[RMDB]
RNA sequence: GGGAACGACUCGAGUAGAGUCGAAAACGGUGUGAAAUGCUGCUUGCAUAAAGGUCCUAUACUGAAUUAAGAAUGUCAAUUUUCAGAAAAGGUCUAGGCUAAGGAAGCAUUGGUGUGUGGUCCUGCCCGGCUAUUAGGGUUUCGACCCUAAUAGCCGAAAAGAAACAACAACAACAAC
Reactivity to DMS in 0.01 (KOAc 150mM, MgCl2 10mM, bicine 150mM(pH8.5), 24C), signal-to-noise 1, nucleotides 027 to 126: c130g010g020u000g020u000g020a050a010a070u000g020c020u000g010c040u010u010g000c040a140u010a050a090a090g000g000u000c020c010u000a060u040a110c030u000g010a080a040u000u010a110a150g030a140a110u010g000u000c290a070a120u010u040u000u010c010a040g000a040a040a190a060g000g010u000c020u000a060g000g020c020u000a060a000g010g010a060a040g030c020a060u000u010g000g000u000g020u000g040u010g000g000u000c040c030u000g000c160c060